[RMDB]
Conditions: 150 mM KOAc, 10 mM MgCl2 and 150 mM bicine (pH 8.5), 24 C. The record gives the reactivity of an RNA of 177 nucleotides to DMS and 2A3.
RNA sequence: GGGAACGACUCGAGUAGAGUCGAAAACUGGAUUGGAUCAGGUAUGCUCCAAGCACGCUGUCCAUGCGGUGCUGAACUCAUCUUUUCUGUUGAGAAUGGUUUUGCAAAACUUUACAAAGGACCCAGAUCAUGUAAAGAGGUUCGCCUCUUUACAUGAAAAAGAAACAACAACAACAAC
Reactivity to DMS in 0.01 (KOAc 150mM, MgCl2 10mM, bicine 150mM(pH8.5), 24C), signal-to-noise 9, nucleotides 027 to 126: c020u010g000g010a100u010u010g000g000a070u020c050a050g010g020u010a100u020g000c080u000c110c090a090a060g010c020a040c090g000c010u010g010u020c080c090a060u020g000c040g010g010u010g000c020u000g000a060a090c030u010c050a040u010c030u000u010u020u020c100u020g010u000u000g000a060g010a070a090u010g000g000u000u010u010u020g000c110a040a050a070a070c030u010u010u030a090c130a040a080a080g000g000a140c010c000c010a100g000a180
Reactivity to 2A3 in 0.01 (KOAc 150mM, MgCl2 10mM, bicine 150mM(pH8.5), 24C), signal-to-noise 9, nucleotides 027 to 126: c020u050g050g050a070u070u100g030g020a030u060c030a030g040g060u110a060u110g020c010u040c050c020a030a030g020c010a010c040g040c020u060g060u210c070c030a060u100g010c030g010g100u050g030c010u020g020a040a030c010u010c040a050u020c050u030u150u130u060c090u120g110u090u100g040a040g030a090a110u090g020g030u040u060u070u110g010c020a020a020a060a070c020u070u110u120a080c060a040a100a040g030g010a030c010c000c000a020g010a110

The DMS profile rests on 48,696 reads.